[RMDB]
RNA sequence: GGGAACGACUCGAGUAGAGUCGAAAAGCCAUCGCUUUCGAGCGAUGGCAUUGCCCUAAGAGGACCUGGGGGUGUCUGGGCUGCUAAACUCAUCAGCCGUUCUACCGCUAAAUUUCGAUUUAGCGAACUCUACUUCUAAUUUCGAUUAGAAGUAGAGAAAAGAAACAACAACAACAAC
Reactivity to 2A3 in 0.01 (KOAc 150mM, MgCl2 10mM, bicine 150mM(pH8.5), 24C), signal-to-noise 7, nucleotides 027 to 126: g000c000c000a010u000c010g010c010u080u050u130c270g110a000g000c010g000a000u010g000g000c000a000u000u120g020c000c000c000u060a200a070g080a090g140g020a040c020c040u070g040g000g020g000g020u020g020u000c040u060g040g020g000c010u020g020c030u090a130a060a030c030u020c030a090u020c020a030g010c010c000g000u040u000c040u120a200c030c010g000c010u020a010a010a010u100u090u080c190g040a020u020u000u010a000g010c000g000a040a030
Reactivity to DMS in 0.01 (KOAc 150mM, MgCl2 10mM, bicine 150mM(pH8.5), 24C), signal-to-noise 6, nucleotides 027 to 126: g010c000c000a000u000c000g020c000u000u000u010c160g010a020g020c000g010a010u000g000g020c000a010u000u000g000c000c010c000u010a110a150g010a120g000g010a050c040c040u000g010g000g010g010g020u010g010u000c050u010g010g000g010c030u000g010c100u000a060a080a060c050u000c040a090u010c050a030g010c010c010g010u000u000c020u000a130c140c020g000c000u000a000a010a010u000u000u010c130g000a040u000u000u000a010g010c000g010a060a130
This 177-nucleotide RNA was probed chemically with 2A3 and DMS. The 2A3 profile rests on 16,237 reads. The DMS profile rests on 12,847 reads. Reactivities are given for positions 27 through 126. The reactions ran in a buffer of 150 mM KOAc, 10 mM MgCl2 and 150 mM bicine (pH 8.5), at 24 C. It was measured as part of the RMDB library M2PK50.